The record gives the reactivity of an RNA of 207 nucleotides to DMS and 2A3.

RNA sequence: GGGAACGACUCGAGUAGAGUCGAAAAGAAAGAAGGCGUAAUCGCCGUGUACGAGCUCCACGAUCAAUGAUUUUCUCGCCACUCGGCAUUGAUCGGACGUACCUCGGAUUGCCGCCUUACAAAGUUAAUACUAGAUUAAAUAAACCGUGGUGGCAAAGUCCUCGUAAUGAUUCGUCAUUACGAGGACAAAAGAAACAACAACAACAAC
Reactivity to DMS in 0.01 (KOAc 150mM, MgCl2 10mM, bicine 150mM(pH8.5), 24C), signal-to-noise 1, nucleotides 027 to 156: g000a120a110a140g000a060a010g030g020c000g090u000a020a050u000c050g000c000c000g000u020g000u000a010c000g010a140g030c090u000c010c120a060c010g010a040u000c000a070a040u010g030a160u010u000u000u000c000u010c130g000c060c040a070c000u000c060g010g000c020a040u000u000g010a010u010c000g000g010a150c080g010u000a030c080c030u010c000g010g040a230u000u000g010c090c130g030c020c010u010u000a180c130a100a160a200g020u000u030a130a140u010a210c030u000a080g010a240u000u000a060a120a090u000a230a080a100c020c060g000u000g020g010u010g010g080c030a080a050a280
Reactivity to 2A3 in 0.01 (KOAc 150mM, MgCl2 10mM, bicine 150mM(pH8.5), 24C), signal-to-noise 3, nucleotides 027 to 156: g080a000a160a010g090a000a010g000g000c000g010u050a060a020u070c140g020c110c030g030u010g000u010a010c010g000a050g070c090u090c080c130a060c060g000a000u000c000a000a000u010g060a120u040u050u210u160c200u110c080g020c020c010a000c000u000c000g050g000c010a010u000u010g000a000u000c000g000g000a030c020g000u000a000c000c050u070c050g000g050a060u020u070g040c060c030g030c000c000u040u040a030c030a010a090a010g020u130u140a120a070u090a190c080u090a010g040a150u210u120a100a180a240u100a100a070a010c000c000g040u080g010g000u000g000g000c000a010a040a000
About this RNA:
The RNA was probed in 150 mM KOAc, 10 mM MgCl2 and 150 mM bicine (pH 8.5) at 24 C.